[RMDB]
RNA sequence: GGGAACGACUCGAGUAGAGUCGAAAAAGAAAGAGAGCGUAGCACACACACAGACUAUGUCUGACACACACCUACGCUACAUGUGUGUGUGAAGUCGAGAUAUCGACAAGUGUGUGUGAUGAAAAAACCUUUUGUGAUAGUUCGCUAUCACAAAAGGAAAAGAAACAACAACAACAAC
Reactivity to DMS in 0.01 (KOAc 150mM, MgCl2 10mM, bicine 150mM(pH8.5), 24C), signal-to-noise 3, nucleotides 027 to 126: a080g000a060a050a050g000a090g010a060g020c020g000u000a030g010c010a010c000a010c000a010c000a040c000a010g000a010c010u000a100u020g020u000c010u000g000a040c000a020c000a010c010a000c010c010u010a010c020g040c200u010a050c120a060u000g010u000g010u000g010u000g010u000g000a020a070g000u000c000g020a030g000a150u020a080u010c000g010a020c010a010a030g010u000g020u000g020u000g010u000g010a080u000g000a000a060a050a070a050a100
Reactivity to 2A3 in 0.01 (KOAc 150mM, MgCl2 10mM, bicine 150mM(pH8.5), 24C), signal-to-noise 3, nucleotides 027 to 126: a000g060a030a040a020g150a010g010a000g040c030g000u020a000g000c020a000c010a010c000a000c000a000c000a000g020a010c030u120a110u300g000u000c000u000g010a010c000a000c000a010c000a000c010c010u040a030c010g030c060u060a030c060a030u050g010u000g000u000g000u000g000u000g030a040a010g010u000c000g010a010g000a140u200a050u150c010g000a000c040a100a110g020u030g000u000g010u000g000u000g000a010u030g000a040a080a000a000a020a010
Conditions: 150 mM KOAc, 10 mM MgCl2 and 150 mM bicine (pH 8.5), 24 C. The record gives the reactivity of an RNA of 177 nucleotides to DMS and 2A3. DMS adducts were read by reverse transcription with MarathonRT. For 2A3 the reverse transcriptase was SuperScript II with manganese. The data come from the RNA Mapping Database (RMDB), library M2PK90.